[RMDB]
RNA sequence: GGGAACGACUCGAGUAGAGUCGAAAAAGGUGGAGAUCCCAUGCCGACCCGAAGAGGAAAGGAGGACACGGACGACAAACCGUGAGAUCUACUGCCCUUUAUUGUUGGGUGCACCCUGGGACCCAGUACCCAAGUAAUUCUUCGGAAUUACUUGGGUAAAAGAAACAACAACAACAAC
Reactivity to DMS in 0.01 (KOAc 150mM, MgCl2 10mM, bicine 150mM(pH8.5), 24C), signal-to-noise 2, nucleotides 027 to 126: a080g010g000u000g010g020a090g010a110u000c010c020c000a040u020g000c020c080g020a050c030c040c050g050a060a050g000a060g020g010a080a260a110g000g000a080g020g040a200c030a010c010g020g000a110c070g010a130c300a100a160a090c000c000g000u020g000a050g020a120u000c010u000a060c050u000g000c300c000c000u000u000u000a140u050u010g030u010u030g010g020g000u000g000c040a050c120c050c030u010g030g010g010a090c020c010c020a130g000u010
Reactivity to 2A3 in 0.01 (KOAc 150mM, MgCl2 10mM, bicine 150mM(pH8.5), 24C), signal-to-noise 2, nucleotides 027 to 126: a000g110g020u090g000g030a120g010a280u040c000c000c030a000u040g050c030c040g110a040c040c000c020g010a110a030g040a020g040g000a040a030a010g030g020a020g000g000a000c010a010c020g020g070a050c070g020a040c110a060a070a050c010c000g000u030g020a060g030a030u030c030u070a080c020u060g040c020c000c000u050u080u090a260u100u190g140u040u100g000g000g030u060g040c030a030c030c020c060u020g010g060g000a020c030c000c000a000g030u050
The record gives the reactivity of an RNA of 177 nucleotides to DMS and 2A3. Source: RMDB library VIROID, as collected in RNAgym. 2A3 adducts were read by reverse transcription with SuperScript II with manganese.